[RMDB]
RNA sequence: GGGAACGACUCGAGUAGAGUCGAAAACGCUGGGAGAUCGAGGCAGGGUGGUAAGACAGCUUUCUAGUACUGAAGCGCGCACGGUACUAGAAAGCAAUGACGCCACUAUUGGCCUGGAUCUCCUGUGCUGAAGCGCGCACGGCAACCGAAAGGUGCGGUACGUUCCUAUGUUCGCAUAGGAACGUACAAAAGAAACAACAACAACAAC
Reactivity to 2A3 in 0.01 (KOAc 150mM, MgCl2 10mM, bicine 150mM(pH8.5), 24C), signal-to-noise 3, nucleotides 027 to 156: c040g020c010u050g000g000g010a000g000a010u040c140g110a000g030g000c020a040g110g000g030u020g010g010u100a190a080g150a170c040a040g060c000u000u000u000c000u000a010g000u000a000c000u010g060a210a020g010c000g000c010g000c000a000c020g020g000u010a000c000u010a000g000a000a000a000g000c000a000a000u070g050a030c080g010c020c000a010c020u110a280u130u200g150g030c000c000u020g010g000a000u000c000u010c000c020u000g000u020g000c000u090g010a140a040g010c000g000c000g040c030a010c040g060g000c020a080a090c010c000g040a110a020a010g000g010u020g000c020g040
Reactivity to DMS in 0.01 (KOAc 150mM, MgCl2 10mM, bicine 150mM(pH8.5), 24C), signal-to-noise 1, nucleotides 027 to 156: c060g020c010u020g000g000g010a100g000a010u000c020g000a050g000g030c010a100g010g050g000u010g020g010u010a030a300g060a300c000a070g000c000u000u010u000c010u000a000g000u030a040c020u010g010a110a020g000c020g000c000g030c030a300c060g030g030u000a000c000u000a020g000a000a000a000g010c000a000a010u010g000a060c050g000c010c000a070c000u010a100u000u020g020g000c020c030u000g030g010a050u000c010u000c070c210u000g010u000g000c020u000g020a150a110g010c000g040c000g060c030a150c050g030g010c020a040a300c050c010g020a060a130a130g020g000u010g050c110g000